An RNA of 177 nucleotides, treated with 2A3 and DMS and read out base by base.
The data come from the RNA Mapping Database (RMDB), libraries RFM100 and RFMREP.
The RNA was probed in 150 mM KOAc, 10 mM MgCl2 and 150 mM bicine (pH 8.5) at 24 C.
Values cover nucleotides 27 to 126.

RNA sequence: GGGAACGACUCGAGUAGAGUCGAAAAGCCAAUUGCUGACAGAAAAGCUACCUUAGGGAUAACAGAGUCGUCACUCGCAAGAGCACAUAUCGACCGAGUGGCUUGCUACCUCGAUGUCGGUUCCCUCGUCUCUAGUUAUUUUCGAAUAACUAGAGACAAAAGAAACAACAACAACAAC
Reactivity to 2A3 in 0.01 (KOAc 150mM, MgCl2 10mM, bicine 150mM(pH8.5), 24C), signal-to-noise 9, nucleotides 027 to 126: g030c010c020a050a070u140u140g020c030u030g040a060c030a140g180a070a120a020a010g010c020u040a080c020c020u080u100a130g020g030g060a070u080a180a070c050a060g080a040g130u080c030g020u020c030a010c020u000c000g000c030a040a020g010a010g060c100a030c030a190u220a060u070c020g020a020c010c000g010a010g030u020g010g000c010u010u060g000c000u020a040c020c020u000c000g020a030u220g010u010c040g070g040u020u000c000c000c000u000c060
Reactivity to DMS in 0.01 (KOAc 150mM, MgCl2 10mM, bicine 150mM(pH8.5), 24C), signal-to-noise 9, nucleotides 027 to 126: g020c050c130a090a110u020u010g010c060u000g010a070c090a130g010a080a050a090a070g000c010u000a060c050c040u000u020a090g010g000g000a080u020a070a080c160a080g010a100g010u000c090g010u000c130a080c000u000c010g010c190a040a180g010a020g010c200a080c200a130u010a080u020c010g000a200c260c010g000a120g000u000g000g000c020u010u010g010c010u000a030c140c040u000c000g000a030u020g000u000c010g000g010u010u000c000c000c010u020c200